[RMDB]
This 177-nucleotide RNA was probed chemically with 2A3 and DMS. The RNA was probed in 150 mM KOAc, 10 mM MgCl2 and 150 mM bicine (pH 8.5) at 24 C. DMS adducts were read by reverse transcription with MarathonRT. High 2A3 reactivity points to a flexible backbone, as in loops and unpaired stretches. Source: RMDB library OK1LIB, as collected in RNAgym. 2A3 adducts were read by reverse transcription with SuperScript II with manganese.
RNA sequence: GGGAACGACUCGAGUAGAGUCGAAAAGGCGCACUGUGUUAAGUUAGUGAAACGCGGGUUCAUCAAUUUGACAGAGUGAUGUGCACUGAUGAACGAAGCUCGGAACAACCCGGAUUCUUCGGAGAAAGGGUUUUAUUAUCUUCGGAUAAUAAAACCCAAAAGAAACAACAACAACAAC
Reactivity to 2A3 in 0.01 (KOAc 150mM, MgCl2 10mM, bicine 150mM(pH8.5), 24C), signal-to-noise 2, nucleotides 027 to 126: g050g010c030g010c010a000c010u040g020u020g050u160u010a030a000g010u010u110a030g000u010g040a000a020a000c040g060c150g290g200g000u000u000c000a040u060c000a000a020u010u060u030g010a010c020a020g060a010g010u010g090a300u170g050u050g010c030a020c000u030g060a060u040g000a080a000c020g010a000a000g010c040u020c020g000g020a080a120c030a010a080c010c000c000g000g000a030u070u090c000u040u060c020g080g050a060g070a030a090a070
Reactivity to DMS in 0.01 (KOAc 150mM, MgCl2 10mM, bicine 150mM(pH8.5), 24C), signal-to-noise 2, nucleotides 027 to 126: g000g000c000g000c000a030c000u000g030u020g000u000u000a030a000g000u000u020a030g010u000g000a040a020a040c040g030c300g000g000g030u000u000c000a000u000c060a030a000u020u010u000g020a020c000a070g040a020g030u000g000a020u010g020u040g010c020a080c000u000g000a130u000g000a050a130c000g000a230a160g010c300u000c000g000g020a110a130c250a110a190c150c000c010g000g000a130u020u010c000u020u000c050g000g000a050g020a090a100a140